Structure probing data (DMS and 2A3) for a 177-nucleotide construct. DMS adducts were read by reverse transcription with MarathonRT. It was measured as part of the RMDB library TTRDES. Reactivities are rounded to 0.1 and cut off at 0 and 3. The RNA was probed in 150 mM KOAc, 10 mM MgCl2 and 150 mM bicine (pH 8.5) at 24 C.
[RMDB]
RNA sequence: GGGAACGACUCGAGUAGAGUCGAAAAGAUAUGGACAUGCCAAGUCCAACAGCGCACGGAUCGGAAACGAUCCAUGCGACAUGGAUGGCAUGUCCUAAGUCAAAAGUACCGCGUUCGCGCGGUACAACAUUCAUGGUGAGUUCGCUCACCAUGAAUGAAAAGAAACAACAACAACAAC
Reactivity to DMS in 0.01 (KOAc 150mM, MgCl2 10mM, bicine 150mM(pH8.5), 24C), signal-to-noise 4, nucleotides 027 to 126: g010a010u000a030u010g000g010a030c010a000u000g000c000c010a080a190g020u000c000c000a110a090c240a140g010c000g010c000a000c070g010g010a000u000c000g020g010a000a000a020c000g000a000u000c000c000a010u000g010c000g000a010c070a250u020g040g010a080u000g010g000c000a000u000g000u000c000c000u000a010a060g000u000c010a100a080a130a130g010u000a000c000c000g010c000g030u000u010c230g030c030g020c000g020g030u000a000c000a080a170
Reactivity to 2A3 in 0.01 (KOAc 150mM, MgCl2 10mM, bicine 150mM(pH8.5), 24C), signal-to-noise 3, nucleotides 027 to 126: g000a000u010a000u050g010g000a000c000a000u010g000c000c020a050a080g250u020c010c030a070a110c160a100g030c010g000c000a010c050g000g010a000u000c000g020g000a000a000a010c000g000a000u000c000c000a000u000g000c000g030a030c090a300u300g000g010a010u030g020g000c000a000u000g000u000c000c000u000a010a000g000u000c000a000a000a020a140g000u000a000c000c010g000c020g020u030u070c300g020c010g000c000g130g000u010a000c000a000a000